Chemical mapping of a 177-nucleotide RNA with DMS.
RNA sequence: GGGAACGACUCGAGUAGAGUCGAAAAGUUGGGUCGCGAAUAAUGUCAUCCUGUUCGCGUUGAAUGGUUUCUACGAUGGAAUACAUGUAACCUGUGCGUGCAGAACACAUAGCGCGGUACAAAGCGGAUAUACAACGGACUUCGGUCCGUUGUAUAUAAAAGAAACAACAACAACAAC
Reactivity to DMS in 0.01 (KOAc 150mM, MgCl2 10mM, bicine 150mM(pH8.5), 24C), signal-to-noise 3, nucleotides 027 to 126: g020u000u000g020g000g030u000c010g000c020g000a060a080u000a090a020u000g020u000c150a200u000c110c060u000g000u000u000c030g030c050g010u020u010g020a080a080u010g000g010u000u000u000c110u000a080c200g010a100u010g000g000a130a070u010a120c020a040u000g010u010a010a030c050c100u000g020u010g000c020g020u010g000c000a020g000a060a090c300a030c020a010u000a050g040c030g000c020g010g010u000a060c050a010a030a110g020c100g000g000
Source information
The data come from the RNA Mapping Database (RMDB), library OK2TST. High DMS reactivity at an A or C suggests that its Watson-Crick edge is free. DMS adducts were read by reverse transcription with MarathonRT. The DMS profile rests on 2,509 reads.